[RMDB]
RNA sequence: GGGAACGACUCGAGUAGAGUCGAAAAGCACCGCCGCAGUGCAGCCAACCUCCCACCGCACACACGCUGCCCGAGCCUGCUCCUGUCGCAGUCGUACCCGGUCCGGGGCCGGACCCGGGUAGGCGUACCAUAUAAUCCCGUUCGCGGGAUUAUAUGGAAAAGAAACAACAACAACAAC
Reactivity to 2A3 in 0.01 (KOAc 150mM, MgCl2 10mM, bicine 150mM(pH8.5), 24C), signal-to-noise 2, nucleotides 027 to 126: g030c010a010c030c030g100c020c020g000c120a030g030u050g020c000a000g060c020c020a040a090c010c030u020c020c020c000a020c030c000g050c010a020c000a000c010a010c100g020c000u030g000c030c020c000g010a020g030c000c020u040g020c010u000c030c010u050g050u090c030g030c130a030g030u040c030g100u040a040c010c000c000g000g000u000c000c000g040g030g160g070c140c020g030g030a090c060c150c010g000g030g010u000a000g000g020c010g010u010a030
Reactivity to DMS in 0.01 (KOAc 150mM, MgCl2 10mM, bicine 150mM(pH8.5), 24C), signal-to-noise 4, nucleotides 027 to 126: g010c050a080c010c060g010c050c060g040c070a090g020u010g010c040a090g000c040c060a080a140c090c040u000c020c010c020a100c100c060g000c060a060c090a090c110a060c060g000c040u000g000c030c010c000g010a080g000c040c020u000g000c030u000c020c020u010g000u000c060g000c090a070g000u000c020g020u000a030c000c000c000g000g010u000c000c010g020g010g010g020c130c040g000g010a040c060c020c030g000g000g010u000a010g010g010c020g010u000a130